The data come from the RNA Mapping Database (RMDB), library M2PK50. Chemical mapping of a 177-nucleotide RNA with 2A3 and DMS. The DMS profile rests on 4,618 reads. The RNA was probed in 150 mM KOAc, 10 mM MgCl2 and 150 mM bicine (pH 8.5) at 24 C. For DMS the reverse transcriptase was MarathonRT. For 2A3 the reverse transcriptase was SuperScript II with manganese.
RNA sequence: GGGAACGACUCGAGUAGAGUCGAAAACCCGUUUUGUUCGCAAAACGGGACUCAUCUUUGCUUGGCAGCAUAGCAGGUGUUGGCUCGACUGCUGGCUUAUCCUUGGAGGCAGUUUCGACUGCCUCAACCUACUCUGAAUCUUCGGAUUCAGAGUAGGAAAAGAAACAACAACAACAAC
Reactivity to 2A3 in 0.01 (KOAc 150mM, MgCl2 10mM, bicine 150mM(pH8.5), 24C), signal-to-noise 3, nucleotides 027 to 126: c010c000c000g010u000u000u000u010g030u020u050c200g000c090a010a010a000a000c010g020g020g040a060c010u000c070a180u040c070u100u110u110g040c040u030u180g050g000c020a030g000c010a080u070a080g010c040a040g040g140u120g070u300u190g160g010c020u020c040g070a120c030u020g000c000u000g050g040c000u050u070a110u130c030c040u020u100g210g000a000g000g000c000a000g000u010u040u120c140g030a010c000u000g020c000c010u000c000a000a000
Reactivity to DMS in 0.01 (KOAc 150mM, MgCl2 10mM, bicine 150mM(pH8.5), 24C), signal-to-noise 3, nucleotides 027 to 126: c000c000c000g010u000u000u000u000g010u000u010c230g020c010a000a000a000a010c010g010g000g010a120c060u000c100a090u010c070u000u000u000g020c020u000u010g020g010c210a040g010c080a080u000a040g010c040a060g010g010u000g010u000u000g010g000c030u000c090g000a100c010u000g000c010u000g000g010c010u000u010a100u010c040c020u000u000g020g020a030g000g020c000a010g010u000u000u010c170g010a050c010u000g000c010c010u000c000a020a080